[RMDB]
RNA sequence: GGGAACGACUCGAGUAGAGUCGAAAAGAUGAGAAUACGUGACUUGGUCAGAGGCGGAAAGGCACAAGCACGAACGAUCCAGUAGAGUAUCGAACCGCCAACAGAUGCACGUUGUGAUCGUGCUAGAAGUGCGAGCUAAUUUCGAUUAGCUCGCACUAAAAGAAACAACAACAACAAC
Reactivity to DMS in 0.01 (KOAc 150mM, MgCl2 10mM, bicine 150mM(pH8.5), 24C), signal-to-noise 2, nucleotides 027 to 126: g000a020u040g000a100g050a150a070u020a140c040g000u020g000a070c020u000u010g050g010u000c030a030g010a160g050g030c010g010g020a110a060a000g000g000c010a060c070a000a020g000c030a000c030g000a050a080c110g000a080u040c030c070a190g000u000a050g010a080g000u000a020u000c050g000a070a300c030c000g000c020c000a120a050c250a110g020a140u020g030c000a070c040g060u000u010g000u000g000a020u050c120g030u040g010c010u000a010g010a110
Reactivity to 2A3 in 0.01 (KOAc 150mM, MgCl2 10mM, bicine 150mM(pH8.5), 24C), signal-to-noise 2, nucleotides 027 to 126: g070a090u270g000a020g050a160a100u110a210c050g000u000g050a030c000u000u020g070g000u000c040a040g020a030g190g000c000g010g000a100a000a150g080g010c010a050c000a200a000g000c030a020c000g000a100a000c040g000a000u000c000c040a030g010u170a040g060a010g080u130a160u090c070g000a010a000c000c000g000c000c060a000a000c000a000g080a120u120g020c000a000c030g000u020u020g140u030g130a120u150c020g020u000g000c000u060a000g000a090